Conditions: 150 mM KOAc, 10 mM MgCl2 and 150 mM bicine (pH 8.5), 24 C. This 177-nucleotide RNA was probed chemically with DMS and 2A3. It was measured as part of the RMDB library TTRDES. Values cover nucleotides 27 to 126. Reactivities are rounded to 0.1 and cut off at 0 and 3. For DMS the reverse transcriptase was MarathonRT.
[RMDB]
RNA sequence: GGGAACGACUCGAGUAGAGUCGAAAAGAUAUGGAUAUGACUCUCCGAUAAGACCUGGUCGGAAACGACCAUGGUCUUUUGACGGAGGUCAUAUCCUAAGUCAAAUCCGUUUCUUCGGAAACGGAAAGUAACUGCUAAACUUCGGUUUAGCAGUUACAAAAGAAACAACAACAACAAC
Reactivity to DMS in 0.01 (KOAc 150mM, MgCl2 10mM, bicine 150mM(pH8.5), 24C), signal-to-noise 2, nucleotides 027 to 126: g000a030u000a040u030g020g010a030u000a000u000g000a010c000u030c010u000c000c000g010a130u010a020a010g000a010c000c000u010g000g020u010c000g020g010a030a000a060c000g020a020c000c000a000u010g030g010u010c000u000u000u000u010g010a200c130g030g000a010g010g010u000c000a000u000a000u000c000c000u000a000a080g000u000c010a110a170a180u000c000c000g010u000u000u010c010u000u020c250g060g030a010a010a000c000g000g000a010a030a090
Reactivity to 2A3 in 0.01 (KOAc 150mM, MgCl2 10mM, bicine 150mM(pH8.5), 24C), signal-to-noise 1, nucleotides 027 to 126: g020a010u030a010u030g000g000a010u000a000u000g010a000c000u000c010u000c300c010g140a170u100a280a000g000a010c010c030u010g010g030u010c010g010g000a040a010a000c010g010a010c020c000a010u100g000g010u000c000u000u000u010u030g120a080c040g000g000a000g000g000u000c000a010u000a000u000c000c000u000a000a000g000u000c000a000a000a120u000c000c010g000u010u010u000c010u040u060c300g200g010a000a000a000c000g000g000a030a010a000